The record gives the reactivity of an RNA of 177 nucleotides to DMS and 2A3.
RNA sequence: GGGAACGACUCGAGUAGAGUCGAAAACAAAGAGUUCGCUCUUUGGCUCGAUUGCCUGAUCGUAAAACAGGAGACGGCCGUGGCCGCGACCACGUAAAAAAGCGUAGAGGGCAAUAUUCGUAUUGCCGCUAUGAAAUAUUUUCGAAUAUUUCAUAGCAAAAGAAACAACAACAACAAC
Reactivity to DMS in 0.01 (KOAc 150mM, MgCl2 10mM, bicine 150mM(pH8.5), 24C), signal-to-noise 3, nucleotides 027 to 126: c000a000a020a020g010a010g010u000u010c270g030c010u000c000u000u000u000g000g010c020u000c000g000a010u000u000g000c000c010u000g000a020u000c010g000u070a030a010a010a010c010a010g000g000a030g010a070c060g000g010c050c020g020u000g000g010c140c030g000c010g010a080c000c000a010c010g000u000a010a000a010a010a000a030g000c010g040u020a100g030a160g020g000g010c000a010a010u000a020u000u010c180g010u000a010u000u000g010c000c010
Reactivity to 2A3 in 0.01 (KOAc 150mM, MgCl2 10mM, bicine 150mM(pH8.5), 24C), signal-to-noise 3, nucleotides 027 to 126: c000a000a000a010g020a000g020u080u140c170g040c110u000c000u010u020u010g030g000c020u020c030g030a040u020u050g020c000c000u020g030a020u030c030g080u130a000a030a020a020c010a020g040g000a010g040a030c030g040g000c020c020g010u010g000g020c070c010g000c000g010a020c000c000a000c000g000u040a000a010a020a010a010a000g000c020g000u050a110g090a150g140g040g000c000a010a000u010a020u040u090c140g000u030a010u000u010g010c000c010
Description
DMS adducts were read by reverse transcription with MarathonRT. For 2A3, 7,595 sequencing reads were counted. For 2A3 the reverse transcriptase was SuperScript II with manganese.